[RMDB]
RNA sequence: GGGAACGACUCGAGUAGAGUCGAAAAGGCUGCGUAUCACUCUAGGGUACGUGAUAGUGCGAUAUAAGAAGCACUGGUACAUGCCGGCAGGGACAGUUAAGACAUGGCCGCAGUCUCGUGUCCCUGCAAAAGGAGUUCUCGUUCGCGAGAACUCCAACAAAACAGGGAACUUCGGUUCCCUGUUUUGAAAAGAAACAACAACAACAAC
Reactivity to 2A3 in 0.01 (KOAc 150mM, MgCl2 10mM, bicine 150mM(pH8.5), 24C), signal-to-noise 4, nucleotides 027 to 156: g010g010c000u010g010c030g000u040a020u040c030a060c170u140c160u210a120g110g000g040u040a030c040g000u020g020a060u090a040g000u010g000c020g050a030u030a030u090a300a090g110a110a010g020c000a000c000u010g020g030u130a080c050a050u150g020c000c000g010g010c000a000g000g000g000a000c000a040g020u090u230a070a000g020a020c020a060u070g060g020c040c030g020c070a010g000u000c010u010c040g070u030g000u030c000c000c000u000g000c000a010a010a010a010g000g000a000g000u000u000c000u000c000g020u070u080c180g000c010g070a000g000a000a000c000u000c000c000a000a010
Reactivity to DMS in 0.01 (KOAc 150mM, MgCl2 10mM, bicine 150mM(pH8.5), 24C), signal-to-noise 2, nucleotides 027 to 156: g000g010c030u000g010c000g070u000a090u010c020a120c090u000c080u010a150g020g030g030u000a020c030g010u010g000a090u000a020g020u000g000c000g030a150u000a170u010a170a110g010a220a300g000c010a020c050u000g020g010u000a070c030a100u010g010c020c020g030g010c000a040g000g010g000a010c030a110g020u000u000a030a050g010a040c040a050u010g010g020c030c020g000c030a140g010u000c000u000c030g030u000g000u000c000c000c000u020g000c010a000a020a090a080g020g000a020g010u000u000c010u000c020g020u000u010c250g030c010g000a030g010a020a010c000u000c010c010a000a090
Chemical mapping of a 207-nucleotide RNA with 2A3 and DMS. Conditions: 150 mM KOAc, 10 mM MgCl2 and 150 mM bicine (pH 8.5), 24 C. DMS (dimethyl sulfate) methylates the pairing face of unpaired adenines and cytosines. DMS adducts were read by reverse transcription with MarathonRT.